[RMDB]
RNA sequence: GGGAACGACUCGAGUAGAGUCGAAAAAUGAACAUGUACAUGCUGGCCAACCCAACCCCACGAUCCUCCAUCGGCAUGAUCAUGAUGUGUUCUCAAAUAUCAGGCCAGUAAAUCACCAUGCUCGUGCCAUAUCCCCAGGCUUCGGCCUGGGGAUAUGAAAAGAAACAACAACAACAAC
Reactivity to 2A3 in 0.01 (KOAc 150mM, MgCl2 10mM, bicine 150mM(pH8.5), 24C), signal-to-noise 5, nucleotides 027 to 126: a000u160g010a050a020c050a040u050g020u140a040c010a070u070g020c000u010g010g030c020c010a050a040c070c000c010a040a070c000c000c000c020a040c030g030a050u020c000c020u010c020c020a080u080c010g000g000c000a020u050g020a050u060c010a030u010g050a040u040g040u010g020u110u000c080u000c040a070a090a020u210a060u090c080a030g000g000c000c000a000g000u020a040a070a030u130c040a020c020c000a010u040g000c010u000c020g030u010g030c010
Reactivity to DMS in 0.01 (KOAc 150mM, MgCl2 10mM, bicine 150mM(pH8.5), 24C), signal-to-noise 3, nucleotides 027 to 126: a030u030g010a070a030c090a030u020g000u010a090c230a070u010g020c000u010g020g000c070c010a110a190c030c030c010a060a150c010c000c000c010a110c060g000a070u020c040c030u000c030c030a050u040c130g000g050c030a010u010g000a010u000c020a030u000g010a070u050g000u000g000u000u000c020u000c050a070a040a070u080a120u020c190a080g000g010c000c000a030g020u000a050a070a090u000c060a030c120c000a010u000g010c030u000c020g010u000g000c030